[RMDB]
RNA sequence: GGGAACGACUCGAGUAGAGUCGAAAAGAUAUGGAUUGCUUUGAUCAUCAAUUGGCUAUAAUCUCGGAAACGAGGUAGCCAUUGAUGGGAGCAAUCCUAAGUCAAAACCAACAGUUCGCUGUUGGAAGUCACAUCAAAUGUUCGCAUUUGAUGUGACAAAAGAAACAACAACAACAAC
Reactivity to DMS in 0.01 (KOAc 150mM, MgCl2 10mM, bicine 150mM(pH8.5), 24C), signal-to-noise 2, nucleotides 027 to 126: g020a050u020a300u010g000g000a000u000u000g010c000u000u000u010g000a150u000c000a000u000c000a000a020u000u000g040g010c010u000a020u000a300a110u010c000u000c000g000g010a130a100a260c010g020a010g030g010u000a000g010c000c000a000u000u010g010a000u000g000g010g010a000g020c000a000a010u000c000c000u000a000a060g000u000c040a140a100a090a110c010c000a000a030c000a000g010u000u010c290g020c000u000g010u000u040g000g000a030a030
Reactivity to 2A3 in 0.01 (KOAc 150mM, MgCl2 10mM, bicine 150mM(pH8.5), 24C), signal-to-noise 2, nucleotides 027 to 126: g010a030u070a050u150g020g000a010u010u020g020c030u280u190u150g110a150u290c010a010u000c000a010a050u200u190g000g000c020u000a030u050a300a300u190c000u000c010g030g000a090a100a070c010g000a000g000g010u000a000g000c010c010a000u010u000g000a000u000g000g000g000a000g000c010a000a000u000c000c000u000a070a010g010u000c030a030a020a070a140c020c000a000a000c000a000g060u090u130c170g050c250u010g020u010u020g000g010a000a030